[RMDB]
Chemical mapping of a 177-nucleotide RNA with DMS and 2A3. The RNA was probed in 150 mM KOAc, 10 mM MgCl2 and 150 mM bicine (pH 8.5) at 24 C.

RNA sequence: GGGAACGACUCGAGUAGAGUCGAAAAGCAAUCUUAGCGAAUUCGCCGAUUGUGGAAACUAGCUUGUCGGCAGCGCGCUUAGUGAUUUUACCCGAGCUGUCCGUGGCUUCGACCAUUCGCAACGUAAACUGCCACGUAAUUUCGAUUACGUGGCAGUAAAAGAAACAACAACAACAAC
Reactivity to DMS in 0.01 (KOAc 150mM, MgCl2 10mM, bicine 150mM(pH8.5), 24C), signal-to-noise 1, nucleotides 027 to 126: g020c050a050a050u020c070u010u010a160g000c000g030a140a120u020u000c130g010c000c110g010a040u000u020g010u000g000g000a090a070a180c120u000a080g000c030u000u000g020u000c000g000g000c020a010g020c290g020c100g000c040u010u000a050g000u010g000a150u000u010u010u000a020c020c050c030g020a030g000c000u000g000u000c000c000g020u000g010g020c030u000u000c080g020a120c000c060a100u010u010c140g020c120a080a050c140g010u020a070a130
Reactivity to 2A3 in 0.01 (KOAc 150mM, MgCl2 10mM, bicine 150mM(pH8.5), 24C), signal-to-noise 1, nucleotides 027 to 126: g000c030a020a040u040c060u110u290a030g000c030g050a270a300u170u160c020g000c030c000g000a030u060u070g070u030g090g050a110a040a040c040u010a050g070c000u000u160g030u220c050g000g000c030a010g000c030g020c010g000c050u050u080a050g030u040g170a070u100u140u040u060a010c010c010c010g000a000g030c020u030g010u040c030c000g060u030g030g000c020u050u120c120g160a190c060c010a080u130u110c090g040c080a000a050c000g000u080a010a140